[RMDB]
RNA sequence: GGGAACGACUCGAGUAGAGUCGAAAACAGUUAUGUGCGUCCCUCCCGAAGCUGCGCGCUCGGUCGAAGAGGACGACCAUCGCCGUUAGAGGACGACCGGUCUUCGGUCAAGGGAAUAAGAGUAAAAGCUACACACACAUUUCGAUGUGUGUGUAGCAAAAGAAACAACAACAACAAC
Reactivity to DMS in 0.01 (KOAc 150mM, MgCl2 10mM, bicine 150mM(pH8.5), 24C), signal-to-noise 2, nucleotides 027 to 126: c050a040g010u000u010a010u000g000u020g010c030g000u000c000c010c000u000c000c010c000g010a040a060g050c000u000g010c200g010c120g030c030u000c000g000g010u020c160g030a080a090g030a120g010g000a030c020g010a040c050c020a040u010c030g030c010c060g000u000u000a090g010a130g010g020a110c090g010a060c030c080g000g000u010c070u000u000c040g030g000u000c020a060a100g000g000g000a090a040u000a090a070g000a090g000u020a040a040a080a110
Reactivity to 2A3 in 0.01 (KOAc 150mM, MgCl2 10mM, bicine 150mM(pH8.5), 24C), signal-to-noise 2, nucleotides 027 to 126: c000a010g020u070u070a040u060g070u040g030c010g000u010c000c010c030u010c020c000c010g070a160a030g020c020u050g020c040g000c020g000c150u030c030g020g020u040c080g060a120a020g040a130g040g020a020c010g010a000c010c000a040u030c030g000c020c000g010u000u040a050g020a060g170g070a060c070g020a020c040c010g000g080u090c040u190u200c050g000g000u000c000a000a040g060g000g040a070a100u090a100a020g070a010g110u090a020a040a040a010